[RMDB]
RNA sequence: GGGAACGACUCGAGUAGAGUCGAAAAAUGUUACAUUAAAUGGCAAAGAUGAAUCAAGGCAGCAGAUGGAAUUAAAGUUACUAAUGAGCUGACUUUAAGAUAGGGAGACUAUCCUGCAUCAUGUUGGUGGCUCAGUAUAAUCACAAGGGUCCAUAAAGCCGUGAUUAUUAUUCGUAAUAAUCACGGCAAAAGAAACAACAACAACAAC
Reactivity to 2A3 in 0.01 (KOAc 150mM, MgCl2 10mM, bicine 150mM(pH8.5), 24C), signal-to-noise 1, nucleotides 027 to 156: a000u020g000u080u090a010c060a020u100u150a140a160a110u070g070g040c000a070a080a080g110a140u200g020a100a080u070c030a060a000g030g000c060a030g010c000a000g000a020u060g010g060a010a060u010u010a090a000a000g010u040u000a020c020u030a120a190u140g040a010g010c040u000g070a120c000u060u100u010a020a060g010a060u070a050g070g000g000a120g020a020c020u040a010u060c000c000u010g000c020a020u030c000a030u110g040u090u050g070g050u000g000g000c020u000c090a000g010u010a050u070a050a000u030c000a000c000a040a100g020g000g020u000c000c000a030u020a040a090a000
Reactivity to DMS in 0.01 (KOAc 150mM, MgCl2 10mM, bicine 150mM(pH8.5), 24C), signal-to-noise 1, nucleotides 027 to 156: a100u010g000u010u010a080c030a110u000u000a060a060a130u000g000g000c010a070a080a090g050a050u000g010a100a110u010c030a060a160g010g010c040a040g030c010a030g010a120u000g000g000a060a130u000u000a010a030a020g040u000u000a020c090u010a080a090u000g010a070g030c040u010g010a020c030u000u000u000a020a060g000a100u010a070g030g000g010a100g000a090c060u000a070u010c010c030u010g010c070a080u000c060a070u000g010u000u000g010g000u000g020g040c070u000c030a110g030u000a070u000a100a210u000c070a090c090a060a170g000g000g000u000c010c020a050u000a030a060a180
The data come from the RNA Mapping Database (RMDB), library OK3TST. The record gives the reactivity of an RNA of 207 nucleotides to 2A3 and DMS. The 2A3 profile rests on 732 reads. The RNA was probed in 150 mM KOAc, 10 mM MgCl2 and 150 mM bicine (pH 8.5) at 24 C.